An RNA of 170 nucleotides, treated with 2A3 and DMS and read out base by base. It was measured as part of the RMDB library 15KLIB. Conditions: 150 mM KOAc, 10 mM MgCl2 and 150 mM bicine (pH 8.5), 24 C. For 2A3, 7,866 sequencing reads were counted.
RNA sequence: GGGAACGACUCGAGUAGAGUCGAAAAGGACGAUUUUGAGGCGGAUCCUAAAGGCAAAUAUGCCCAGAAUCUGCUUAAGAAGUUGAUUGGCGGUGAUGUCACUCCAGUUGACCAAUACAUGUGUGGCGAGGGACUUUCUUCGGAAAGUCCAAAAGAAACAACAACAACAAC
Reactivity to 2A3 in 0.01 (KOAc 150mM, MgCl2 10mM, bicine 150mM(pH8.5), 24C), signal-to-noise 5, nucleotides 027 to 129: g080g010a010c030g010a020u000u050u070u220g050a100g030g000c010g010g000a020u000c000c010u080a170a050a060g040g010c030a110a070a120u260a060u230g000c000c010c000a000g000a010a030u000c000u060g000c000u040u030a060a000g090a020a040g060u010u010g090a150u050u030g010g000c090g000g030u040g030a140u170g140u180c020a000c010u040c020c040a060g000u020u070g120a090c020c000a050a030u130a100c100a140u100g030u030g010u000g060g020c030g030a050g000
Reactivity to DMS in 0.01 (KOAc 150mM, MgCl2 10mM, bicine 150mM(pH8.5), 24C), signal-to-noise 5, nucleotides 027 to 129: g020g050a070c000g000a080u000u000u000u000g050a080g020g070c280g060g000a080u040c020c010u020a080a150a150g000g020c050a060a150a170u040a130u050g030c010c040c090a050g070a050a050u000c010u040g030c040u000u000a160a090g060a000a000g010u010u050g000a110u080u010g060g000c200g010g060u070g020a200u000g060u020c040a010c000u060c030c080a050g040u020u040g020a110c080c090a000a000u060a120c080a090u090g000u000g020u090g020g000c110g030a080g050